[RMDB]
RNA sequence: GGGAACGACUCGAGUAGAGUCGAAAAAGAGUACGGCCGCAAGGUUUCCGGUUGUGGAUGGCAGCGUGUGUGUCGCCCCGUCGUCUAGUGCUGGUUCUAGGGCUGGGGCGUCAGCAUCCACGUAAAAACGUAAGCAUUUAUUCGUAAAUGCUUACGUAAAAGAAACAACAACAACAAC
Reactivity to 2A3 in 0.01 (KOAc 150mM, MgCl2 10mM, bicine 150mM(pH8.5), 24C), signal-to-noise 4, nucleotides 027 to 126: a000g100a010g050u080a030c040g050g020c010c010g030c060a050a040g080g010u030u070u060c050c000g070g040u100u110g030u040g010g030a050u020g070g020c060a060g000c090g050u120g010u010g010u020g050u140c010g000c000c010c010c000g010u030c010g030u000c020u000a010g000u030g110c110u160g150g110u140u020c010u010a010g000g040g000c100u160g030g010g030g000c010g000u010c000a000g000c000a010u000c010c010a010c000g010u030a060a060a000a010
Reactivity to DMS in 0.01 (KOAc 150mM, MgCl2 10mM, bicine 150mM(pH8.5), 24C), signal-to-noise 5, nucleotides 027 to 126: a110g010a110g010u010a060c110g010g010c020c020g010c150a080a080g000g010u000u000u000c020c030g010g010u000u000g010u000g000g000a040u000g010g010c070a110g010c060g020u010g010u010g010u000g010u000c000g010c000c010c000c010g010u000c020g010u010c010u000a020g010u000g010c100u000g000g000u000u000c000u000a020g000g000g000c020u010g030g000g000g020c000g010u000c020a050g010c020a030u000c040c010a010c020g010u010a050a040a040a100
Structure probing data (2A3 and DMS) for a 177-nucleotide construct. For 2A3, 8,883 sequencing reads were counted. Source: RMDB library M2PK90, as collected in RNAgym. The RNA was probed in 150 mM KOAc, 10 mM MgCl2 and 150 mM bicine (pH 8.5) at 24 C.